[RMDB]
An RNA of 177 nucleotides, treated with DMS and 2A3 and read out base by base.
RNA sequence: GGGAACGACUCGAGUAGAGUCGAAAACUAUAUCAGCAAUUAUGCGCCAUUCCCGCAUUGCAGGUGUGGCAAGGUUGCGCCAACUAUCUUUUCCUGCGCUGUUUAAGGCCGGAAAUAGCGCUACAACGACUAUAAAAGGAUUCGUCCUUUUAUAGUCAAAAGAAACAACAACAACAAC
Reactivity to DMS in 0.01 (KOAc 150mM, MgCl2 10mM, bicine 150mM(pH8.5), 24C), signal-to-noise 8, nucleotides 027 to 126: c070u000a090u010a080u000c120a110g010c030a040a040u000u000a110u010g010c250g010c020c010a060u000u000c050c020c010g020c050a160u000u000g030c010a030g010g010u000g020u000g010g010c030a100a050g000g010u000u000g010c040g010c100c080a050a080c140u000a050u010c040u010u000u000u000c020c020u000g010c010g010c000u000g010u000u000u000a070a090g000g000c020c030g000g000a010a010a010u000a010g010c000g000c010u010a090c200a100a140c220
Reactivity to 2A3 in 0.01 (KOAc 150mM, MgCl2 10mM, bicine 150mM(pH8.5), 24C), signal-to-noise 9, nucleotides 027 to 126: c040u060a050u060a060u300c060a020g020c000a010a060u100u070a110u300g080c070g000c020c000a020u030u040c020c000c010g000c120a240u070u300g000c030a020g000g010u020g000u010g010g000c010a030a050g050g000u030u030g010c010g020c030c010a050a060c040u080a080u170c040u030u090u030u020c000c020u030g000c030g010c010u010g050u040u040u060a080a050g060g030c020c000g020g010a000a010a000u020a000g000c010g010c020u070a030c030a110a030c090
Annotation:
For DMS the reverse transcriptase was MarathonRT. For DMS, 13,810 sequencing reads were counted. The 2A3 profile rests on 25,660 reads.